[RMDB]
RNA sequence: GGGAACGACUCGAGUAGAGUCGAAAAGAGACGUUCGCGUCUCAAAAAUCCUAAGUCCUGCUGGAGCCUGAAGCGUUGAAAUAUCGGAAACGAUAUGGAGCUUCUGCGUAGGAUAGCGAUGAAAGCAGGAUAUGGAAAAAAGGUCCUUCGGGACCAACAAAUCGAGAAGGUUCGCCUUCUCGAUUUGAAAAGAAACAACAACAACAAC
Reactivity to 2A3 in 0.01 (KOAc 150mM, MgCl2 10mM, bicine 150mM(pH8.5), 24C), signal-to-noise 1, nucleotides 027 to 156: g010a020g010a000c010g020u040u120c230g050c010g110u060c000u020c010a000a040a000a000a010u010c000c010u010a060a040g060u000c000c010u000g010c000u020g030g040a020g030c000c010u010g040a000a000g020c010g110u180u060g000a030a100a000u010a000u000c010g020g080a140a030a020c010g000a010u000a000u000g010g030a010g000c000u000u020c000u010g000c040g080u100a030g080g220a220u170a070g060c040g170a210u070g020a080a000a000g010c010a000g060g000a020u010a040u050g020g000a040a040a030a070a050a060g010g010u050c020c000u000u120c200g120g010g000a010c020c000a000a010

Overview: Conditions: 150 mM KOAc, 10 mM MgCl2 and 150 mM bicine (pH 8.5), 24 C. An RNA of 207 nucleotides, treated with 2A3 and read out base by base. Values cover nucleotides 27 to 156.